[RMDB]
RNA sequence: GGGAACGACUCGAGUAGAGUCGAAAAUGGCUUACUGAAUGGGUCGACGGCAAAGCGCGUGCUCUACCAGAUUCCUUAUUCUCGUCCGGUAGGUUCGAGACUAACAGCCGCGCUUUCCUCGAUGAAGCCGAGGAAAAGUUUGCCGCCGCUCACCCUCGUUAAGAACCGGUUUCGACCGGUUCUUAACAAAAGAAACAACAACAACAAC
Reactivity to 2A3 in 0.01 (KOAc 150mM, MgCl2 10mM, bicine 150mM(pH8.5), 24C), signal-to-noise 2, nucleotides 027 to 156: u050g060g020c070u090u140a090c020u160g080a180a150u270g000g000g000u120c050g010a020c010g000g000c000a040a040a010g010c000g010c030g060u150g000c000u030c010u080a110c050c010a050g020a280u100u100c010c030u070u080a100u100u000c000u010c010g040u010c000c020g080g200u250a120g080g050u120u050c010g010a010g000a040c010u050a100a050c040a030g010c000c000g000c000g000c000u000u000u010c010c000u000c000g020a020u100g080a020a040g030c070c000g000a010g000g000a020a130a060a180g020u000u080u020g000c000c010g020c000c000g010c040u070c030a030c000c030c000u020c030